[RMDB]
RNA sequence: GGGAACGACUCGAGUAGAGUCGAAAAGUUACGCAUACAGCUUGAUGGACAUUAACUGGCGUCACAACCAGUCCACAUUUUAUCAUUUCACAAGCGAUCAUCGCAUUUCUGGUUGGAAAGAGACCAAUGCCAUGUACGUCGCACUCAAUAGUCAGUUGUACUCGAGACGCUUCGGCGUCUCGAGUACAAAAGAAACAACAACAACAAC
Reactivity to 2A3 in 0.01 (KOAc 150mM, MgCl2 10mM, bicine 150mM(pH8.5), 24C), signal-to-noise 3, nucleotides 027 to 156: g010u000u080a050c040g000c050a020u120a170c030a060g030c000u030u050g030a040u070g200g060a050c050a110u160u130a090a030c080u060g000g000c030g080u020c040a000c030a130a030c020c000a000g020u060c050c000a160c020a080u000u070u110u170a140u130c060a030u050u270u130c090a050c010a240a000g000c000g060a040u190c000a060u040c010g000c000a050u000u020u190c130u230g000g000u010u010g120g110a050a140a010g140a000g010a000c000c000a020a020u020g010c010c020a000u070g020u080a060c070g050u010c000g000c010a020c040u070c030a060a080u040a050g150u080c080a050g050u050u000
Chemical mapping of a 207-nucleotide RNA with 2A3. Conditions: 150 mM KOAc, 10 mM MgCl2 and 150 mM bicine (pH 8.5), 24 C. For 2A3, 1,056 sequencing reads were counted.